[RMDB]
RNA sequence: GGGAACGACUCGAGUAGAGUCGAAAAGAUAUGGAGUUUAGACAUGCUGUGAAGACCGAAGAACUACGAGUUUCGGAAACGAAACUCGUAGGGAGGUUGGAGGCAGCAACAGCUAAACUCCUAAGUCCCUAAUGUCUUUGUUCGCAAAGACAUUAGGAAAAGAAACAACAACAACAAC
Reactivity to DMS in 0.01 (KOAc 150mM, MgCl2 10mM, bicine 150mM(pH8.5), 24C), signal-to-noise 4, nucleotides 027 to 126: g010a110u000a300u010g000g020a010g010u000u000u000a010g010a090c110a250u000g010c020u000g020u000g020a300a300g010a010c000c000g040a130a160g000a240a280c000u000a000c010g000a020g000u000u000u000c000g010g000a110a050a230c010g000a000a010a000c000u000c010g010u000a000g010g000g010a040g030g020u000u000g000g010a300g010g000c020a000g000c000a030a040c300a170g000c000u000a000a000a000c000u000c000c000u010a040a110g000u000c060
Reactivity to 2A3 in 0.01 (KOAc 150mM, MgCl2 10mM, bicine 150mM(pH8.5), 24C), signal-to-noise 3, nucleotides 027 to 126: g080a020u110a080u270g010g000a010g020u000u010u000a030g040a170c120a190u150g010c010u050g160u230g150a130a010g020a010c020c010g190a300a040g020a080a020c000u000a000c010g010a010g000u000u020u000c010g010g000a090a030a030c010g010a000a000a000c010u030c010g000u000a000g010g000g000a030g000g010u020u010g030g030a060g300g090c030a000g000c000a010a040c020a010g020c000u010a000a030a000c000u000c000c000u000a000a010g010u000c020
The data come from the RNA Mapping Database (RMDB), library TTRINS. Chemical mapping of a 177-nucleotide RNA with DMS and 2A3. 2A3 adducts were read by reverse transcription with SuperScript II with manganese. Values are in units of 0.01, from 0 to 300, in steps of 10. Values cover nucleotides 27 to 126.